[RMDB]
RNA sequence: GGGAACGACUCGAGUAGAGUCGAAAAGAUCUACCACCCGGACCAGUUCAUCUAUGUUGGCUCGAUGUCGGGCUUGCUAGACCCCUCCAACGCAAUGGGUCCCUCGCUAAUCGGUCUGGCGAUGGGAUCCACUAGGUACUUUCGAGUACCUAGUGGAAAAAGAAACAACAACAACAAC
Reactivity to DMS in 0.01 (KOAc 150mM, MgCl2 10mM, bicine 150mM(pH8.5), 24C), signal-to-noise 6, nucleotides 027 to 126: g010a080u010c050u000a120c050c050a120c050c020c020g010g000a070c040c030a100g010u010u010c130a080u000c030u010a040u010g010u000u000g010g010c010u000c000g030a230u020g010u010c030g020g000g000c010u000u000g010c040u000a040g000a110c020c010c000c010u000c010c020a080a080c220g010c220a060a120u010g010g010g000u000c000c000c000u000c000g010c010u010a040a120u000c100g000g000u000c050u000g000g010c000g000a020u010g020g000g000a030
Reactivity to 2A3 in 0.01 (KOAc 150mM, MgCl2 10mM, bicine 150mM(pH8.5), 24C), signal-to-noise 5, nucleotides 027 to 126: g020a070u030c020u050a090c010c030a030c020c020c030g030g030a040c030c010a050g030u170u160c030a060u010c080u070a050u250g030u030u030g030g020c010u010c020g120a190u290g170u300c030g000g000g020c000u020u020g010c010u010a010g020a060c000c020c000c000u000c020c010a070a050c060g050c070a060a130u080g040g030g000u010c000c000c000u010c010g000c010u020a080a090u100c050g050g040u020c050u030g000g000c010g010a050u160g000g000g000a010